[RMDB]
RNA sequence: GGGAACGACUCGAGUAGAGUCGAAAACCGCGCGUGAAAUCGCUGCAUGUAGAUUGACGAUAUCCUCGAGCCAGUCGAACAGGCGCGCAAUGUCUGGGGGUAUGCCUGGGAGCCAUGCGCGGGAGUCCCUUCAGGCAUCGUUCGCGAUGCCUGAAGGAAAAGAAACAACAACAACAAC
Reactivity to DMS in 0.01 (KOAc 150mM, MgCl2 10mM, bicine 150mM(pH8.5), 24C), signal-to-noise 2, nucleotides 027 to 126: c000c010g010c000g020c050g050u000g010a120a110a110u000c040g010c020u010g010c020a070u010g010u020a160g010a040u010u000g020a070c010g000a100u010a110u020c180c060u000c050g000a100g010c050c010a040g010u000c030g010a110a110c040a020g000g000c010g000c040g020c220a070a070u020g010u010c030u010g000g000g020g010g020u000a060u000g010c020c010u000g010g010g000a100g020c160c030a010u000g000c010g000c020g000g000g000a180g000u010c050
Reactivity to 2A3 in 0.01 (KOAc 150mM, MgCl2 10mM, bicine 150mM(pH8.5), 24C), signal-to-noise 1, nucleotides 027 to 126: c010c020g010c000g030c070g030u020g080a050a050a100u200c040g020c100u070g010c040a070u120g050u030a040g010a130u000u050g020a050c030g020a030u010a060u230c050c030u010c060g070a020g050c040c000a010g000u060c020g010a100a030c060a040g020g020c010g040c040g000c000a000a080u150g020u100c020u050g040g010g010g030g110u220a120u190g080c000c000u070g100g000g020a010g090c060c000a020u060g000c010g000c030g000g000g000a000g040u000c000